[RMDB]
RNA sequence: GGGAACGACUCGAGUAGAGUCGAAAAAUAACUGAGGAUACGGCCCGCACAGCGAACCUGGCGCUUGAGCUGGAUGCAGCCACUGAAGUAGGCCGUGCGUGCGCUGGCUGCCGUGUGGAGCCCGGCGAAUGUCCACCUAAUUCGUUAGGUGGACAUUAAAAGAAACAACAACAACAAC
Reactivity to DMS in 0.01 (KOAc 150mM, MgCl2 10mM, bicine 150mM(pH8.5), 24C), signal-to-noise 5, nucleotides 027 to 126: a100u010a060a090c100u000g000a140g000g010a070u000a040c030g000g000c010c070c140g010c030a060c020a040g010c010g000a040a030c070c020u000g010g020c020g000c040u000u000g010a060g000c130u000g010g010a130u010g010c160a090g000c010c030a060c060u000g000a050a060g000u000a100g030g010c010c010g020u000g010c100g010u010g010c010g020c020u000g000g020c030u000g010c000c030g000u000g020u010g010g010a150g000c030c020c040g020g000c130g010
Reactivity to 2A3 in 0.01 (KOAc 150mM, MgCl2 10mM, bicine 150mM(pH8.5), 24C), signal-to-noise 2, nucleotides 027 to 126: a000u100a040a070c080u060g070a020g080g060a060u030a120c010g000g040c050c070c040g010c050a160c020a070g010c020g020a010a040c020c000u030g010g000c020g040c030u030u060g130a010g030c070u030g010g020a070u220g090c030a030g090c010c000a030c030u070g060a080a020g020u110a140g190g000c000c030g040u040g010c050g030u020g010c010g010c000u000g010g000c010u020g000c000c000g000u010g030u050g030g060a050g040c040c050c000g040g000c030g060